Conditions: 150 mM KOAc, 10 mM MgCl2 and 150 mM bicine (pH 8.5), 24 C.
This 207-nucleotide RNA was probed chemically with 2A3.
It was measured as part of the RMDB library M2RFPK.
RNA sequence: GGGAACGACUCGAGUAGAGUCGAAAAGAUCGGAAACAGCAGCAGGUGAGUCCGCCUUAUGUGAAUGAUCGGCUGAAACACGAGGAAAUACUGAGCCAACGCAAGACGGUAGCCGAACAGUAGCAACAAAACGCUUACGUGUUCGCACGUAAGCGAACACUACGCCGCUGUUCGCAGCGGCGUAGUGAAAAGAAACAACAACAACAAC
Reactivity to 2A3 in 0.01 (KOAc 150mM, MgCl2 10mM, bicine 150mM(pH8.5), 24C), signal-to-noise 1, nucleotides 027 to 156: g000a020u100c050g010g010a150a020a000c010a020g130c000a020g060c020a000g080g010u020g100a050g040u040c000c010g050c020c020u160u110a150u060g080u050g040a120a170u070g010a020u020c000g000g020c010u070g050a090a010a030c060a020c100g010a140g000g110a000a100a000u140a070c030u080g020a000g000c030c020a060a010c060g030c080a020a020g030a000c110g020g010u020a000g010c010c000g020a000a000c020a010g020u040a010g070c010a020a050c040a040a050a010a060c010g020c000u000u000a000c000g000u000g050u090u050c110g000c020a000c020g000u010a000a000g000c020g000a000a000